[RMDB]
RNA sequence: GGGAACGACUCGAGUAGAGUCGAAAAAAUGCACGAAACAUCCAAGGGCCGACUCGGAUAUUUGCGGAAUACGAAGGUGUUUAGGAAAACAGAAAAUCCACCACAGCUGGUGGGCGUGGGUCCACUUGAAAACUAAACUCACUGGGACAUUUCCACAGAGUGCUAAUAUGUUCGCAUAUUAGCACUCAAAAGAAACAACAACAACAAC
Reactivity to 2A3 in 0.01 (KOAc 150mM, MgCl2 10mM, bicine 150mM(pH8.5), 24C), signal-to-noise 1, nucleotides 027 to 156: a000a000u080g000c020a010c040g060a040a050a000c050a020u040c020c020a080a040g060g040g040c010c040g060a160c020u090c080g050g000a060u090a080u190u070u170g130c040g000g050a040a070u110a150c090g050a050a020g060g000u030g010u030u060u000a020g010g070a080a120a090a000c010a010g100a040a070a010a010u020c010c000a010c010c010a040c050a060g050c190u050g000g000u010g010g000g000c010g000u040g000g050g040u110c100c000a010c010u000u080g040a010a000a090a000c010u040a010a030a000c020u010c050a030c020u040g030g020g020a010c020a060u040u040u020c000c020a000c010a050